This 177-nucleotide RNA was probed chemically with 2A3 and DMS. The reactions ran in a buffer of 150 mM KOAc, 10 mM MgCl2 and 150 mM bicine (pH 8.5), at 24 C. The DMS profile rests on 2,732 reads.

RNA sequence: GGGAACGACUCGAGUAGAGUCGAAAAGAUAUGGAUCGUAUGUACAGCAACAGCUCGGAAACGAGACAUGCUGAACAUCACGAUCCUAAGUCAAAGGAUUCUGGUAGCUUCGGCUACCAGAAUCCAACGAUAUCCAGUUGUUCGCAACUGGAUAUCGAAAAGAAACAACAACAACAAC
Reactivity to 2A3 in 0.01 (KOAc 150mM, MgCl2 10mM, bicine 150mM(pH8.5), 24C), signal-to-noise 1, nucleotides 027 to 126: g040a000u090a050u160g000g000a000u000c000g000u010a010u000g000u030a100c010a010g010c010a020a110c030a210g070c000u000c010g000g040a090a090a060c000g020a000g050a050c010a020u080g000c000u010g000a020a000c000a010u040c070a010c000g010a000u000c000c000u000a020a010g030u020c050a040a110a130g030g000a000u010u000c010u020g030g000u020a000g000c000u060u090c300g120g000c000u000a000c000c000a000g000a000a020u000c000c000a000a010
Reactivity to DMS in 0.01 (KOAc 150mM, MgCl2 10mM, bicine 150mM(pH8.5), 24C), signal-to-noise 3, nucleotides 027 to 126: g000a050u000a300u020g000g000a000u010c000g000u010a020u000g010u000a070c000a010g020c000a040a120c300a160g010c000u000c000g000g010a050a110a220c010g000a020g000a040c070a140u000g000c000u010g000a090a020c000a000u000c220a020c010g010a000u010c000c000u010a010a080g000u010c030a100a110a090g000g000a010u000u000c000u000g010g000u010a000g010c000u000u010c180g020g000c000u000a010c010c000a000g000a000a000u000c000c000a020a030